[RMDB]
RNA sequence: GGGAACGACUCGAGUAGAGUCGAAAAUAGUGGCCGCUGGGGUUGCUCCAAAGAUUCAAGUGGAGUUGGCGUAUGCUAUUGGCGUUGCCGAACCGGUGAGCAUCUUUGUGGAGACUUACGAUAAUAGGUAUAUGAACAAGUUCGCUUGUUCAUAUACAAAAGAAACAACAACAACAAC
Reactivity to DMS in 0.01 (KOAc 150mM, MgCl2 10mM, bicine 150mM(pH8.5), 24C), signal-to-noise 9, nucleotides 027 to 126: u010a080g030u000g010g010c030c030g020c050u000g010g010g000g010u000u000g020c010u000c030c020a080a090a080g010a110u010u010c170a100a130g010u010g010g010a080g010u010u010g010g010c020g000u000a020u000g020c010u000a160u000u010g010g020c020g040u000u000g010c010c010g010a170a220c030c020g010g010u010g010a100g010c070a030u000c020u000u000u000g010u000g010g000a070g000a060c060u010u000a070c120g010a100u010a060a110u020a090g010
This 177-nucleotide RNA was probed chemically with DMS. For DMS, 23,155 sequencing reads were counted. Reactivities are given for positions 27 through 126.